[RMDB]
RNA sequence: GGGAACGACUCGAGUAGAGUCGAAAAUUGCCCCAAGGUAUGGCUGCCUGGUAUCUACGAAGAACUGUAGAAAAACAUGGAUGAUACGCAGAGAAGCGGACAAACGCCUUCCAUGGAUCAGCUGACAUCUUACACCGUCAUUCGUGACGGUGUAAGAAAAAGAAACAACAACAACAAC
Reactivity to DMS in 0.01 (KOAc 150mM, MgCl2 10mM, bicine 150mM(pH8.5), 24C), signal-to-noise 4, nucleotides 027 to 126: u030u010g000c080c000c000c120a120a060g010g010u000a070u010g000g020c020u010g000c110c000u010g000g040u000a040u000c020u010a030c020g020a130a150g040a100a120c210u040g010u000a030g000a000a050a030a020a050c000a000u000g010g000a010u000g010a060u010a120c000g000c010a020g000a010g000a030a030g020c000g000g020a140c200a020a000a020c000g000c010c010u020u000c010c000a020u000g000g010a030u010c010a040g000c010u000g000a050c100a060
Reactivity to 2A3 in 0.01 (KOAc 150mM, MgCl2 10mM, bicine 150mM(pH8.5), 24C), signal-to-noise 6, nucleotides 027 to 126: u090u150g130c010c000c000c000a030a040g080g020u110a060u120g020g000c010u000g030c020c030u020g030g000u050a050u010c000u000a000c050g080a090a170g070a230a120c120u110g010u010a000g000a030a130a000a000a010c010a000u010g010g000a010u030g040a070u080a130c000g000c000a000g000a000g000a020a000g000c020g090g140a030c070a010a010a000c010g030c000c000u000u010c000c000a000u000g000g020a040u040c000a000g000c010u020g010a020c020a050
Annotation:
Chemical mapping of a 177-nucleotide RNA with DMS and 2A3. It was measured as part of the RMDB libraries RFM100 and RFMREP. Values cover nucleotides 27 to 126. 2A3 adducts were read by reverse transcription with SuperScript II with manganese.